The data come from the RNA Mapping Database (RMDB), library RFMREP.
An RNA of 177 nucleotides, treated with 2A3 and DMS and read out base by base.
High DMS reactivity at an A or C suggests that its Watson-Crick edge is free.
The DMS profile rests on 2,191 reads.
RNA sequence: GGGAACGACUCGAGUAGAGUCGAAAAGAGUGAAAGGCUAAUCAAACCCCGUGAUAGCUGGUUCUCUUCGAAAUGCAUUUAGGUGCAGCGUCACGUGCUGAUGCGCGGGGGUAGAGCACUGACAAGGCAGAACUACACAGUUCGCUGUGUAGUUCUGAAAAGAAACAACAACAACAAC
Reactivity to 2A3 in 0.01 (KOAc 150mM, MgCl2 10mM, bicine 150mM(pH8.5), 24C), signal-to-noise 2, nucleotides 027 to 126: g040a010g030u100g140a100a070a020g030g030c000u060a020a080u050c060a120a070a210c020c020c000c020g000u020g020a040u030a010g020c020u010g010g100u110u020c010u000c000u030u030c060g140a090a110a110u070g000c000a010u000u070u170a180g040g040u000g000c020a020g030c050g070u040c000a040c110g030u030g000c010u040g020a100u070g030c010g000c000g030g000g010g000g000u030a050g020a010g050c010a000c010u040g020a020c020a060a000g100g000
Reactivity to DMS in 0.01 (KOAc 150mM, MgCl2 10mM, bicine 150mM(pH8.5), 24C), signal-to-noise 3, nucleotides 027 to 126: g020a030g030u000g000a070a140a200g010g020c010u000a060a090u010c050a050a080a200c010c000c000c020g000u000g020a040u000a010g000c010u000g010g020u000u000c030u000c010u010u000c120g010a070a080a110u030g010c040a020u000u010u010a120g030g010u000g020c000a070g020c100g000u000c010a030c130g010u000g020c030u000g020a120u000g020c030g020c050g000g000g000g000g000u000a080g010a050g000c020a010c010u020g010a050c090a110a110g020g010